[RMDB]
RNA sequence: GGGAACGACUCGAGUAGAGUCGAAAAAUAAAAGGCUGACAAAAUCCGAUGUCUACCUCGUCGUGGUGUCAGCCGGAAUGUGCUGUAUCAGUACUGCAUAUAUUAACAGACAUGGAAAUAAAAAAAAGAGUAUAUCAAUCUUCGGAUUGAUAUACUCAAAAGAAACAACAACAACAAC
Reactivity to DMS in 0.01 (KOAc 150mM, MgCl2 10mM, bicine 150mM(pH8.5), 24C), signal-to-noise 1, nucleotides 027 to 126: a100u000a060a080a120a110g020g020c000u000g000a010c010a120a020a060a120u020c020c010g000a040u010g000u000c010u000a040c040c020u010c200g020u030c140g010u020g000g030u000g000u000c000a020g000c010c010g020g000a080a000u010g030u000g000c010u000g000u000a030u010c160a160g010u000a020c010u000g000c000a040u000a060u000a040u020u000a030a030c040a020g010a020c020a020u000g000g040a040a140a080u050a050a030a020a060a040a180a130a120
Reactivity to 2A3 in 0.01 (KOAc 150mM, MgCl2 10mM, bicine 150mM(pH8.5), 24C), signal-to-noise 2, nucleotides 027 to 126: a000u090a010a130a020a060g000g000c000u000g000a000c000a020a050a030a300u040c010c010g020a000u020g000u000c020u000a020c020c000u020c080g240u020c090g040u140g050g000u020g000u000c000a000g000c000c000g000g000a020a010u020g000u010g000c020u000g010u040a030u130c080a100g140u040a020c010u010g000c010a010u010a000u020a030u030u110a000a020c010a000g020a000c000a020u000g000g060a020a120a060u190a070a170a060a000a010a000a010a010
Source information: The record gives the reactivity of an RNA of 177 nucleotides to DMS and 2A3. Source: RMDB library M2PK90, as collected in RNAgym. Reactivities are rounded to 0.1 and cut off at 0 and 3. DMS adducts were read by reverse transcription with MarathonRT. The DMS profile rests on 982 reads.